[RMDB]
Source: RMDB library M2RFPK, as collected in RNAgym. This 207-nucleotide RNA was probed chemically with 2A3 and DMS.
RNA sequence: GGGAACGACUCGAGUAGAGUCGAAAAACGGUCGUACACGACCGAGGCGCGGCUAGGUCGACGGACCGAACAAUGGCAUCCCGCAUUCUGCCAUCCGCCGCGCAGCUUCUUCUCAAACGGUGCGGAAAAAAGUAGGACACCUUCGGGUGUCCUACAACGUGAAUCAAUUGUUCGCAAUUGAUUCACGAAAAGAAACAACAACAACAAC
Reactivity to 2A3 in 0.01 (KOAc 150mM, MgCl2 10mM, bicine 150mM(pH8.5), 24C), signal-to-noise 3, nucleotides 027 to 156: a010c010g000g000u020c040g110u200a110c180a080c180g000a010c000c000g000a030g000g010c000g010c000g000g010c000u000a000g000g010u010c020g120a150c210g180g030a000c010c010g010a000a010c000a000a000u000g000g010c010a020u100c020c000c000g000c000a030u300u090c010u030g000c000c000a010u010c010c020g000c000c000g000c010g010c000a000g000c000u140u070c000u050u030c030u010c030a070a070a050c050g010g000u000g000c010g000g000a020a020a020a030a000a070g000u010a000g000g010a000c010a000c000c010u050u080c190g060g000g000u000g000u000c000c000u000a000c000a000a000
Reactivity to DMS in 0.01 (KOAc 150mM, MgCl2 10mM, bicine 150mM(pH8.5), 24C), signal-to-noise 1, nucleotides 027 to 156: a040c010g050g040u010c000g060u000a110c160a230c010g000a010c000c040g030a060g010g030c030g000c010g000g000c000u020a100g020g020u010c020g040a160c300g000g000a040c000c000g010a140a040c300a160a040u000g010g020c010a090u000c030c010c010g000c050a040u000u000c050u010g000c020c010a010u020c080c070g000c000c010g000c010g000c010a010g000c050u020u000c080u000u010c030u010c040a070a070a060c100g000g040u010g000c010g040g000a000a090a070a070a150a150g000u000a010g010g010a030c000a000c000c000u000u020c300g000g000g010u000g000u000c000c010u010a000c010a030a050